[RMDB]
RNA sequence: GGGAACGACUCGAGUAGAGUCGAAAAGAUGGCCCGGCGACUGCCCAUCCUCCAGAGAGAGCUGGAUCAAGCAAAAGAAGCAGUCCCCAAAUUCUUAGGGCCAGGGAUGCCAGGUAACCUGGCACCCAAGGCUAUCUGAGGAGACAGGCAAUGAGGCGUGAUGUAUAAGGUUCGCCUUAUACAUCACAAAAGAAACAACAACAACAAC
Reactivity to 2A3 in 0.01 (KOAc 150mM, MgCl2 10mM, bicine 150mM(pH8.5), 24C), signal-to-noise 4, nucleotides 027 to 156: g070a070u050g030g030c030c050c030g020g010c040g010a030c020u020g010c040c010c000a080u000c020c050u020c020c020a010g060a010g010a000g010a020g130c010u020g020g010a060u090c110a080a050g100c030a060a090a040a040g050a070a010g000c010a010g020u010c050c000c000c000a060a210a050u070u030c010u030u070a030g010g000g020c000c000a000g010g010g000a110u020g000c000c000a010g040g020u070a160a190c050c000u000g000g010c000a000c000c000c000a020a050g000g000c000u030a040u080c000u070g010a010g010g010a010g010a000c040a030g010g040c030a040a120u120g020a080g070g090c070
Reactivity to DMS in 0.01 (KOAc 150mM, MgCl2 10mM, bicine 150mM(pH8.5), 24C), signal-to-noise 2, nucleotides 027 to 156: g010a140u000g010g010c030c020c030g050g030c040g010a070c030u000g010c030c020c040a200u000c050c030u000c020c010a130g000a200g000a160g000a160g070c000u000g010g010a090u000c050a100a140g000c070a100a080a100a190g000a120a200g000c020a040g000u000c000c000c010c040a020a080a150u000u000c020u000u000a050g020g000g000c050c030a070g030g030g010a060u010g020c010c000a010g020g010u000a100a150c090c000u010g010g060c010a010c000c000c010a050a090g010g000c040u000a040u010c020u000g020a050g030g000a110g000a000c050a000g000g030c040a060a110u000g010a070g040g010c090
Structure probing data (2A3 and DMS) for a 207-nucleotide construct.
Source: RMDB library OK3TST, as collected in RNAgym.
For DMS the reverse transcriptase was MarathonRT.